Structure probing data (DMS and 2A3) for a 177-nucleotide construct. It was measured as part of the RMDB library RFM100. For 2A3 the reverse transcriptase was SuperScript II with manganese.
[RMDB]
RNA sequence: GGGAACGACUCGAGUAGAGUCGAAAAAUCAAGCAACUCAAUCCUUAAAUUUUUCUCCUACUGAGUAUCUGGAAAACAGGUGCAGAAAUGGAUCAUUUGAGACACCAUAGAAAUCUGGUUAAUCCUGUGGCAUAAGGAUUUUCGAAUCCUUAUGCCAAAAAGAAACAACAACAACAAC
Reactivity to DMS in 0.01 (KOAc 150mM, MgCl2 10mM, bicine 150mM(pH8.5), 24C), signal-to-noise 1, nucleotides 027 to 126: a030u060c050a170a080g000c100a080a170c050u050c130a010a120u080c300c150u000u030a030a020a030u000u000u000u000u000c040u000c030c020u000a200c020u030g000a090g010u000a030u000c030u030g000g000a120a060a050a120c000a010g010g070u000g010c000a030g000a100a120a040u000g000g000a250u000c030a070u000u010u030g000a090g020a060c060a000c030c040a040u050a170g000a080a140a040u020c040u000g000g000u000u010a030a110u060c000c000u000g020
Reactivity to 2A3 in 0.01 (KOAc 150mM, MgCl2 10mM, bicine 150mM(pH8.5), 24C), signal-to-noise 2, nucleotides 027 to 126: a000u080c040a020a010g050c000a010a100c140u030c150a020a100u150c000c030u140u130a080a070a150u080u050u000u040u010c050u010c000c000u020a040c060u060g020a000g010u070a070u080c010u000g050g100a000a100a030a030c020a070g000g000u040g000c000a000g070a070a100a000u060g000g010a030u010c060a080u050u110u230g100a080g000a060c040a100c120c000a000u000a040g250a010a070a010u030c000u070g090g000u030u020a080a090u120c000c010u020g080